RNA sequence: GGGAACGACUCGAGUAGAGUCGAAAAUCUUCUGCCCUAGCCCGGUCUUCGAAGCUUCCUUUGGCUACUACCCGGUGGAAACAACUGAAGCUUCAACGCCUUUUUUUCCUAUCUUCUUUAGCACCGGGCUAGGGAGUAAGCCCGUGGAACCUUAGUUCCAUACAAAAAGGUUCGCCUUUUUGUAUGGAAAAGAAACAACAACAACAAC
Reactivity to 2A3 in 0.01 (KOAc 150mM, MgCl2 10mM, bicine 150mM(pH8.5), 24C), signal-to-noise 2, nucleotides 027 to 156: u040c010u070u010c020u070g300c000c000c010u020a000g040c000c000c000g000g030u030c060u270u240c260g010a000a000g000c000u000u010c000c010u040u040u020g060g010c010u010a030c000u120a120c010c010c130g070g000u000g040g040a180a190a120c020a000a000c020u010g020a000a000g010c030u020u000c020a020a010c030g130c030c020u070u050u050u010u020u220u150c080c030u190a270u160c060u230u100c050u110u300u130a100g050c110a010c010c000g000g000g000c010u000a010g030g000g000a010g010u020a000a020g030c000c000c000g020u060g010g030a030a040c010c010u090u010a060g070u080u000